[RMDB]
RNA sequence: GGGAACGACUCGAGUAGAGUCGAAAAGCGGACCCGGUCUACCGGGCACGGCGGCCUAUGCUGCGGACAAGUGCGGGCGGUGUCGUCGCGGCGGCGGCGCGGUUGUGUUCGCGGUCGGCAAGGUAGGCGAGGUAGGCGGCAUCGUAAGCGGUGGUGCCUCAGCAACGGUAUUCGUACCGUUGCUGAGAAAAGAAACAACAACAACAAC
Reactivity to 2A3 in 0.01 (KOAc 150mM, MgCl2 10mM, bicine 150mM(pH8.5), 24C), signal-to-noise 1, nucleotides 027 to 156: g030c020g000g050a110c010c000c040g020g010u050c020u050a160c020c010g040g020g000c060a020c030g110g040c020g050g030c010c020u100a120u230g060c030u060g030c040g030g000a010c030a030a090g070u060g110c020g030g000g010c030g060g060u040g020u020c020g020u040c040g020c050g110g060c000g000g020c000g000g000c000g030c020g080g030u080u100g060u010g030u020u020c040g000c030g030g000u020c020g010g060c030a040a040g040g000u020a020g010g040c020g020a040g010g050u080a070g000g000c000g000g050c020a050u050c010g020u050a110a000g010c070g100g000u050g000g090u020g030c000